[RMDB]
Overview
Structure probing data (2A3 and DMS) for a 207-nucleotide construct. Conditions: 150 mM KOAc, 10 mM MgCl2 and 150 mM bicine (pH 8.5), 24 C.
RNA sequence: GGGAACGACUCGAGUAGAGUCGAAAAACAUAGGCCUUGCUUACGAGCAUGGCCUAUGACGAAUCUCAAGCAAUCAAGCAUUCUACUUCUAUUGCAACACUGAGGAGCUUACGAGCUCCUCAGUGAAAAAAGAGAGUAAUGUUCGCAUUACUCUCAAGUAUGAUUAAACGUUCGCGUUUAAUCAUACAAAAGAAACAACAACAACAAC
Reactivity to 2A3 in 0.01 (KOAc 150mM, MgCl2 10mM, bicine 150mM(pH8.5), 24C), signal-to-noise 5, nucleotides 027 to 156: a000c000a000u000a000g010g000c000c000u010u010g000c010u070u060a080c250g110a030g000c000a000u010g010g000c000c000u000a000u000g000a000c000g080a080a100u020c010u010c050a040a050g010c010a010a050u100c020a070a000g030c030a160u190u080c040u170a100c030u050u050c030u110a050u030u050g010c020a080a050c010a030c010u020g000a000g000g000a000g000c000u100u050a090c230g040a020g000c000u000c000c000u000c000a000g000u000g010a000a000a000a000a000a000g000a000g000a000g000u000a000a000u010g030u050u090c160g020c110a000u000u000a000c000u000c000u000c000a000a000
Reactivity to DMS in 0.01 (KOAc 150mM, MgCl2 10mM, bicine 150mM(pH8.5), 24C), signal-to-noise 2, nucleotides 027 to 156: a140c020a020u000a010g000g000c010c000u020u000g000c000u000u000a100c250g010a080g020c000a020u000g010g030c000c000u000a000u000g010a110c070g020a110a120u000c040u000c020a130a140g020c050a100a060u000c140a090a100g020c060a110u000u000c110u000a060c010u000u000c050u000a060u000u000g020c010a140a250c010a000c020u000g010a020g000g000a010g000c010u000u000a090c200g020a110g010c000u000c000c000u000c000a000g000u020g010a000a010a030a120a060a090g000a030g000a060g000u000a010a000u010g040u000u000c300g010c000a000u000u000a010c000u000c000u000c010a030a070
DMS adducts were read by reverse transcription with MarathonRT. Values are in units of 0.01, from 0 to 300, in steps of 10.